[RMDB]
RNA sequence: GGGAACGACUCGAGUAGAGUCGAAAAGGGCUGUCCCAGAUGGCUGGGCUUGGUGGGCUAAUUUCUGGCCUGCCCUGUCCAAGCACAGAGUUGGAUCACGAGGCCCAAAUGAAAAUAUGGGCUUCUUGAUUCCUAAAGUGGGGCGGACCGCAUGAGGCCGCCAUGCUUUGUUCGCAAAGCAUGGCGGAAAAGAAACAACAACAACAAC
Reactivity to 2A3 in 0.01 (KOAc 150mM, MgCl2 10mM, bicine 150mM(pH8.5), 24C), signal-to-noise 1, nucleotides 027 to 156: g000g030g000c000u000g000u000c050c000c010a000g090a090u020g050g000c000u020g000g000g000c020u000u000g020g040u020g000g020g040c050u070a050a100u110u300u300c240u210g040g000c000c000u000g000c000c000c000u050g010u000c010c010a050a000g110c200a150c010a240g050a000g050u090u100g000g010a000u030c020a020c040g000a000g000g000c000c000c000a050a050a050u020g010a010a010a110a010u090a040u070g000g000g000c000u000u000c000u000u000g000a000u090u120c000c000u140a160a170a100g100u110g010g000g000g000c000g010g010a050c050c000g040c000a120u130g050a090g140g000